Source information: Conditions: 150 mM KOAc, 10 mM MgCl2 and 150 mM bicine (pH 8.5), 24 C. This 177-nucleotide RNA was probed chemically with 2A3. The 2A3 profile rests on 435 reads.
RNA sequence: GGGAACGACUCGAGUAGAGUCGAAAACAAUCUACCGAGCAUUGGUGGUUUUUCUCUCUGAAUUUCCACACGCAGCUUGCCAAUAUCGGGAGAAGAGGCGUUCAAACCACCCAUUUCACCUUCUCGGGAGCGCUCCCGUAUUCGUACGGGAGCGCUCAAAAGAAACAACAACAACAAC
Reactivity to 2A3 in 0.01 (KOAc 150mM, MgCl2 10mM, bicine 150mM(pH8.5), 24C), signal-to-noise 2, nucleotides 027 to 126: c030a040a160u000c010u110a030c000c030g030a000g110c070a080u050u090g000g000u020g040g060u000u000u000u000u000c060u000c020u030c040u030g070a230a250u010u140u050c060c000a020c000a030c180g020c030a030g070c000u190u180g110c020c000a030a070u070a220u140c070g000g070g080a040g070a060a000g000a130g100g000c050g000u110u220c040a010a000a030c000c000a060c020c030c000a110u080u120u100c100a140c040c000u160u190c020u000c050g000g090